[RMDB]
About this RNA
This 177-nucleotide RNA was probed chemically with DMS and 2A3. The DMS profile rests on 8,532 reads. For DMS the reverse transcriptase was MarathonRT. Values cover nucleotides 27 to 126. The 2A3 profile rests on 3,983 reads.
RNA sequence: GGGAACGACUCGAGUAGAGUCGAAAACUCGAUGAAUAAUCGAUAGUGGGCUUGUAGUCAGCUUGGUCACACCAAUGUAAAAUCAUACUACAUGCAGUAUGGUGUGCAACUCUUAUAAGCUGCACCCUGGAUGGGUAAAUUUCGAUUUACCCAUCCAAAAAGAAACAACAACAACAAC
Reactivity to DMS in 0.01 (KOAc 150mM, MgCl2 10mM, bicine 150mM(pH8.5), 24C), signal-to-noise 4, nucleotides 027 to 126: c160u000c000g010a010u000g000a160a060u040a110a050u000c010g000a030u020a080g030u020g010g020g010c080u010u000g000u010a010g000u010c150a010g000c170u020u000g000g000u070c000a040c030a050c010c020a060a050u020g000u000a020a030a110a080u040c240a090u040a060c210u020a060c120a050u030g010c110a060g000u020a120u010g000g010u020g020u010g000c020a050a040c030u010c140u030u010a040u020a010a010g000c000u000g000c040a140c000c060c010
Reactivity to 2A3 in 0.01 (KOAc 150mM, MgCl2 10mM, bicine 150mM(pH8.5), 24C), signal-to-noise 6, nucleotides 027 to 126: c000u000c000g010a020u060g040a060a150u190a210a020u040c000g010a020u100a100g050u060g060g020g000c040u000u020g010u030a020g020u100c100a010g040c100u040u010g040g060u180c000a000c000a010c010c000a050a060u020g010u060a030a130a170a130u200c090a030u060a200c010u040a070c060a100u140g030c000a020g050u190a130u100g000g000u010g020u000g010c010a020a030c010u010c020u070u100a020u010a130a000g000c000u120g060c000a070c010c000c010
The reactions ran in a buffer of 150 mM KOAc, 10 mM MgCl2 and 150 mM bicine (pH 8.5), at 24 C. For 2A3 the reverse transcriptase was SuperScript II with manganese.